[RMDB]
Chemical mapping of a 177-nucleotide RNA with DMS and 2A3. For 2A3 the reverse transcriptase was SuperScript II with manganese. For DMS the reverse transcriptase was MarathonRT. It was measured as part of the RMDB libraries RFM100 and RFMREP. The RNA was probed in 150 mM KOAc, 10 mM MgCl2 and 150 mM bicine (pH 8.5) at 24 C.
RNA sequence: GGGAACGACUCGAGUAGAGUCGAAAACAUCAGGUUAAUAAUCCUGAGCUCGCAACCCUUAAACUGGGGGGACGCAUGAGAAAAGAUGACUAGGUUAUUGAAUUCCGAGUUGAGUCCACGGACUCAGCAUUGGACAUUAAUUCGUUAAUGUCCAAUGAAAAGAAACAACAACAACAAC
Reactivity to DMS in 0.01 (KOAc 150mM, MgCl2 10mM, bicine 150mM(pH8.5), 24C), signal-to-noise 9, nucleotides 027 to 126: c100a140u010c010a020g000g010u010u020a100a080u020a170a120u020c000c000u000g010a030g010c050u010c040g000c060a110a300c010c000c010u010u010a060a110a120c220u020g010g010g010g000g000g010a110c220g000c040a080u010g010a050g000a100a070a090a140g000a050u020g010a050c060u020a090g010g010u000u000a080u000u000g010a080a140u010u000c020c020g010a090g010u010u000g000a020g010u000c000c030a120c300g030g000a010c000u000c000a020g000
Reactivity to 2A3 in 0.01 (KOAc 150mM, MgCl2 10mM, bicine 150mM(pH8.5), 24C), signal-to-noise 9, nucleotides 027 to 126: c020a090u050c010a000g020g020u080u100a120a030u080a080a020u180c000c000u010g010a010g040c010u010c020g010c010a040a060c010c000c000u050u110a240a300a130c220u210g010g000g000g000g010g030a050c090g010c050a080u270g010a010g040a050a080a020a020g110a070u130g030a030c060u080a050g080g030u090u050a080u070u150g080a140a120u120u010c030c030g020a030g050u040u030g020a000g000u000c020c010a050c180g070g000a000c000u000c000a000g010